RNA sequence: GGGAACGACUCGAGUAGAGUCGAAAACAAUGCCACCUUCGUCAAAGAUUCGUUCAAUUCUGCCACUAUUGUGUUGGACGAUUCGCAACCGUCUCCUUCCAACUCAACAUUCGUGAUCGGUGCAGCACCAUGAGUCGUAGUUCGCUACGACUCAUGGAAAAGAAACAACAACAACAAC
Reactivity to DMS in 0.01 (KOAc 150mM, MgCl2 10mM, bicine 150mM(pH8.5), 24C), signal-to-noise 2, nucleotides 027 to 126: c140a070a060u000g000c030c030a110c030c010u020u000c110g010u000c060a110a070a140g000a030u000u020c030g020u000u000c010a050a060u010u010c050u000g000c080c080a080c170u000a080u010u020g030u020g010u000u020g000g000a000c240g000a020u000u000c050g010c110a070a070c140c030g000u000c000u000c020c020u000u000c040c010a030a110c030u000c010a060a100c060a070u000u010c080g000u000g020a080u000c020g020g000u010g020c030a030g000c100a200
Reactivity to 2A3 in 0.01 (KOAc 150mM, MgCl2 10mM, bicine 150mM(pH8.5), 24C), signal-to-noise 2, nucleotides 027 to 126: c020a000a120u110g010c000c010a030c000c020u060u080c020g110u080c050a090a070a070g020a030u010u070c010g020u040u000c010a000a050u040u010c050u090g100c080c060a130c060u110a100u170u240g040u010g020u060u010g000g000a000c010g030a030u030u030c040g000c030a030a080c030c010g010u000c010u010c020c000u050u030c010c010a040a050c010u000c060a010a130c030a110u110u110c020g050u040g050a080u030c030g000g020u030g000c030a010g010c020a040
An RNA of 177 nucleotides, treated with DMS and 2A3 and read out base by base. The RNA was probed in 150 mM KOAc, 10 mM MgCl2 and 150 mM bicine (pH 8.5) at 24 C. 2A3 adducts were read by reverse transcription with SuperScript II with manganese. It was measured as part of the RMDB library OK2TRN. For DMS, 1,755 sequencing reads were counted.